[RMDB]
RNA sequence: GGGAACGACUCGAGUAGAGUCGAAAAUGAGGACUUUAGUAUGCUAUCUGGUGUAAGUCCUUACAACAACCCUACCAGAUAGAGGUAGUCAUGUUUUCCAUGCCUUUAUGAUUAAAAACUAAAGUUUAGAUGGGUAAUUUGCACUAGGUCACAGAGAUAAAUAUUAUCCCUUCGGGGAUAAUAUUUAAAAAGAAACAACAACAACAAC
Reactivity to 2A3 in 0.01 (KOAc 150mM, MgCl2 10mM, bicine 150mM(pH8.5), 24C), signal-to-noise 2, nucleotides 027 to 156: u160g000a000g010g000a000c000u030u050u090a090g080u120a170u220g050c010u020a020u030c000u020g000g070u050g010u030a020a010g000u000c000c010u060u080a100c040a050a010c000a020a110c000c000c040u040a000c000c000a000g000a000u000a010g000a000g000g090u020a030g000u010c020a020u030g050u000u080u080u040c080c010a010u040g110c020c000u040u170u020a100u040g090a070u090u220a100a160a070a010a000c030u090a050a020a050g040u040u100u160a060g000a060u010g000g000g010u030a030a040u070u050u040g020c070a010c020u030a030g030g030u080c050a010c020a060g110a110g100a000
Reactivity to DMS in 0.01 (KOAc 150mM, MgCl2 10mM, bicine 150mM(pH8.5), 24C), signal-to-noise 2, nucleotides 027 to 156: u020g000a070g010g020a040c010u000u010u000a150g020u000a120u010g030c020u000a010u000c010u000g000g000u000g000u000a020a040g020u000c000c020u000u000a100c090a040a110c100a100a140c020c000c020u000a100c010c000a050g000a050u010a020g000a110g010g040u000a030g000u020c040a080u010g010u000u000u010u000c040c030a230u010g000c080c020u000u000u000a040u020g000a150u010u010a030a070a080a140a140c040u010a080a070a130g010u000u010u000a090g010a090u000g010g020g010u000a050a080u010u000u000g000c020a050c050u000a090g010g010u010c040a050c030a080g010a170g030a250
An RNA of 207 nucleotides, treated with 2A3 and DMS and read out base by base.
The reactions ran in a buffer of 150 mM KOAc, 10 mM MgCl2 and 150 mM bicine (pH 8.5), at 24 C.
DMS adducts were read by reverse transcription with MarathonRT.
The data come from the RNA Mapping Database (RMDB), library OK3TST.
The 2A3 profile rests on 934 reads.